The record gives the reactivity of an RNA of 177 nucleotides to DMS and 2A3. The 2A3 profile rests on 3,566 reads. Values are in units of 0.01, from 0 to 300, in steps of 10. The RNA was probed in 150 mM KOAc, 10 mM MgCl2 and 150 mM bicine (pH 8.5) at 24 C. Values cover nucleotides 27 to 126. DMS adducts were read by reverse transcription with MarathonRT.
RNA sequence: GGGAACGACUCGAGUAGAGUCGAAAACGGCGUUCGACAGAUUUUCGCUCAUUACGCGAUCCGGCCGUGAUUCAGGCGAUGCACUAUAUCCGCCAUCAUGCCUGCAAGGGGAUUAAGGUUGAACAGGCUCUACAGGAUUGUUCGCAAUCCUGUAGAGAAAAGAAACAACAACAACAAC
Reactivity to DMS in 0.01 (KOAc 150mM, MgCl2 10mM, bicine 150mM(pH8.5), 24C), signal-to-noise 5, nucleotides 027 to 126: c060g010g000c050g010u010u010c060g020a070c100a140g000a140u000u000u000u000c010g010c030u000c160a140u010u010a080c160g030c070g000a070u010c070c040g000g000c030c020g010u000g000a100u000u000c080a050g030g010c010g010a040u000g010c100a100c140u000a120u010a070u010c100c070g000c100c020a040u000c030a060u000g020c010c010u000g000c180a070a090g000g000g000g000a100u010u000a080a080g010g010u000u000g020a080a100c100a160g010g020
Reactivity to 2A3 in 0.01 (KOAc 150mM, MgCl2 10mM, bicine 150mM(pH8.5), 24C), signal-to-noise 4, nucleotides 027 to 126: c020g060g000c030g020u030u060c040g070a020c030a070g160a160u090u060u050u090c000g010c000u000c090a190u070u280a070c070g020c020g030a050u010c020c010g050g000c010c020g020u020g060a110u090u100c040a020g030g000c020g010a010u050g040c030a030c150u070a080u030a080u300c080c060g020c040c000a010u010c010a020u170g020c000c010u020g000c080a090a100g020g040g020g000a010u110u080a140a030g060g010u020u020g010a020a020c010a030g070g000